[RMDB]
RNA sequence: GGGAACGACUCGAGUAGAGUCGAAAAUGGUACGAUGGAUUUGGCUAAAGUCGACAAUAAGCAACAUGUUUACUUAGUUGGAAUGAACGACGGCACCAUGCCACAACCAGUAACUGCAUCAAGUUUACCUUAGAGAGCUUUUCGAAGCUCUCUAAGGAAAAGAAACAACAACAACAAC
Reactivity to 2A3 in 0.01 (KOAc 150mM, MgCl2 10mM, bicine 150mM(pH8.5), 24C), signal-to-noise 6, nucleotides 027 to 126: u070g020g020u050a050c060g030a090u040g040g040a050u030u020u080g020g000c020u090a070a010a100g020u020c020g010a030c020a040a110u120a170a030g080c020a010a050c040a070u130g060u130u110u080a080c060u060u070a060g030u070u020g070g080a170a120u100g030a110a030c010g020a000c000g010g000c030a010c040c020a030u040g010c030c010a040c010a020a050c020c020a010g040u070a040a050c040u050g050c030a110u060c050a150a040g010u060u060u080a100
Reactivity to DMS in 0.01 (KOAc 150mM, MgCl2 10mM, bicine 150mM(pH8.5), 24C), signal-to-noise 3, nucleotides 027 to 126: u000g000g000u000a040c070g000a060u000g000g010a070u000u000u000g000g000c000u010a040a220a090g010u020c000g000a080c070a050a050u030a000a140g030c100a080a040c150a100u010g020u010u000u010a090c070u000u030a080g020u000u000g000g010a050a080u050g020a050a120c060g000a050c020g000g010c130a100c010c010a060u000g000c070c010a040c070a100a020c040c040a030g000u060a030a070c020u020g000c060a050u000c130a010a080g010u000u000u020a100
The record gives the reactivity of an RNA of 177 nucleotides to 2A3 and DMS.
Values cover nucleotides 27 to 126.
The RNA was probed in 150 mM KOAc, 10 mM MgCl2 and 150 mM bicine (pH 8.5) at 24 C.
For DMS the reverse transcriptase was MarathonRT.
It was measured as part of the RMDB library OK1LIB.